Annotation:
Source: RMDB library M2PK50, as collected in RNAgym. Chemical mapping of a 177-nucleotide RNA with DMS and 2A3. The RNA was probed in 150 mM KOAc, 10 mM MgCl2 and 150 mM bicine (pH 8.5) at 24 C. Values cover nucleotides 27 to 126.
RNA sequence: GGGAACGACUCGAGUAGAGUCGAAAACUGGCGUCGUUCGCGACGCCAGAAAUACAAAGACCGAAGCUUAGAUGGCCGACACUUCCCUUGGGCGCAAAACAAAAACCGGUCUGUUCGCAGACCGGAACUCUAUGCACCUCUUCGGAGGUGCAUAGAGAAAAGAAACAACAACAACAAC
Reactivity to DMS in 0.01 (KOAc 150mM, MgCl2 10mM, bicine 150mM(pH8.5), 24C), signal-to-noise 1, nucleotides 027 to 126: c000u000g020g020c010g020u000c000g030u010u040c140g000c020g000a010c020g010c000c000a000g000a000a060a070u000a100c130a040a100a130g010a120c020c020g000a090a100g010c030u000u000a070g010a090u040g010g020c040c010g020a190c010a080c130u000u000c000c000c000u000u010g030g000g010c020g020c140a070a020a080a110c130a040a050a070a150a080c010c000g000g000u000c000u000g000u000u010c190g000c010a000g000a000c000c000g000g000a000a010
Reactivity to 2A3 in 0.01 (KOAc 150mM, MgCl2 10mM, bicine 150mM(pH8.5), 24C), signal-to-noise 1, nucleotides 027 to 126: c010u010g020g000c010g000u000c010g020u050u030c210g040c000g130a000c010g000c000c000a000g000a000a000a000u180a030c030a000a110a010g080a020c000c040g000a020a000g030c060u130u190a050g020a160u220g120g000c010c000g020a030c050a070c250u040u040c000c000c000u070u110g010g000g000c020g060c020a000a030a060a090c010a010a090a070a000a000c000c010g000g010u000c000u000g000u000u050c300g020c050a000g030a010c000c000g000g010a000a000

Annotation:
Reactivities are rounded to 0.1 and cut off at 0 and 3. For DMS, 648 sequencing reads were counted.